The data come from the RNA Mapping Database (RMDB), library OK3TST. This 207-nucleotide RNA was probed chemically with 2A3 and DMS. The RNA was probed in 150 mM KOAc, 10 mM MgCl2 and 150 mM bicine (pH 8.5) at 24 C.

RNA sequence: GGGAACGACUCGAGUAGAGUCGAAAAGCAGAGAAGGCAGUGGACUCUCUAGUGAAGAAGUUAAAGAAGAAGAAGGGAGCCAUGGACGAGCUGGAGAGGGCUCUCAGCUGCCCGGGGCAGCCCAGCAAAUGCGUCACGAUUCCCCGCUCCCUGGACACGCAUAAUCAGUAUUCGUACUGAUUAUGCGAAAAGAAACAACAACAACAAC
Reactivity to 2A3 in 0.01 (KOAc 150mM, MgCl2 10mM, bicine 150mM(pH8.5), 24C), signal-to-noise 2, nucleotides 027 to 156: g030c020a020g020a020g040a150a040g040g000c060a080g020u070g040g010a030c010u020c010u000c030u140a060g060u090g130a040a080g020a080a000g020u110u190a150a050a060g080a040a010g020a040a010g010a020a020g010g000g000a000g020c020c030a100u150g010g000a020c030g020a000g000c000u030g030g030a090g020a040g050g060g000c010u020c000u010c060a040g020c010u070g000c000c000c020g010g000g010g000c030a030g040c010c000c000a020g000c020a010a130a060u180g030c010g020u000c030a030c160g080a180u040u040c010c000c000c000g000c010u030c000c000c010u000g010g000a050c060a000
Reactivity to DMS in 0.01 (KOAc 150mM, MgCl2 10mM, bicine 150mM(pH8.5), 24C), signal-to-noise 1, nucleotides 027 to 156: g070c020a030g020a100g080a140a060g000g050c010a020g080u020g020g020a100c010u000c010u000c000u010a120g050u010g000a100a070g000a070a140g020u010u000a090a000a100g020a120a110g000a160a070g000a150a070g020g010g000a070g030c000c070a070u000g000g010a080c000g010a240g020c040u000g010g020a160g000a190g010g010g070c040u000c020u010c070a100g040c050u000g020c010c040c060g020g000g010g010c040a060g020c020c030c030a060g050c010a100a080a120u000g020c050g010u000c010a130c080g010a300u000u000c010c000c000c040g000c000u010c000c000c000u020g000g030a080c100a100
Record summary
For DMS the reverse transcriptase was MarathonRT.